An RNA of 207 nucleotides, treated with DMS and 2A3 and read out base by base. Source: RMDB library OK3TST, as collected in RNAgym. The DMS profile rests on 5,498 reads.
[RMDB]
RNA sequence: GGGAACGACUCGAGUAGAGUCGAAAAAGUGAGGAGAUAGACCUUCUUGACUUACUGGGUGAUGAUGAAGAACCAAAUGAUGGAGAGAGAGACCCUGCUGAUCAAGCUCCUCAGCCAUAUGUUACAGGAUCAGCACUACGUGAAGCUUUGAAGGCCACGAAAACGAAUUUUUCGAAAUUCGUUUUCGAAAAGAAACAACAACAACAAC
Reactivity to DMS in 0.01 (KOAc 150mM, MgCl2 10mM, bicine 150mM(pH8.5), 24C), signal-to-noise 3, nucleotides 027 to 156: a110g010u010g000a040g000g020a090g030a190u010a100g000a070c040c020u000u010c040u000u000g010a120c070u000u010a040c050u000g010g010g020u010g010a080u010g000a110u000g000a090a110g010a080a130c100c050a020a130a080u000g010a080u000g000g010a130g010a130g010a190g010a160g000a040c020c010c030u000g030c030u010g000a020u000c020a050a140g000c010u010c030c030u000c020a090g010c060c040a110u010a090u000g010u010u000a050c080a120g010g000a040u000c040a030g040c040a090c040u000a060c070g030u010g010a080a100g010c050u000u010u000g010a060a050g010g030c010c060a150
Reactivity to 2A3 in 0.01 (KOAc 150mM, MgCl2 10mM, bicine 150mM(pH8.5), 24C), signal-to-noise 5, nucleotides 027 to 156: a000g120u050g010a010g010g020a030g010a070u110a100g090a050c010c000u040u020c000u070u060g060a090c030u030u080a030c040u050g040g010g040u020g020a070u030g000a020u060g020a040a040g010a060a060c060c010a070a060a130u140g030a040u060g010g010a030g000a000g000a000g010a010g010a050c010c010c040u030g020c010u010g010a050u020c030a000a050g010c010u030c010c000u020c030a010g020c020c010a080u100a050u210g110u090u080a100c060a070g130g000a030u010c000a000g010c020a010c040u050a000c030g060u050g040a040a010g000c020u060u050u070g040a050a030g010g000c010c030a020

Values cover nucleotides 27 to 156. For DMS the reverse transcriptase was MarathonRT.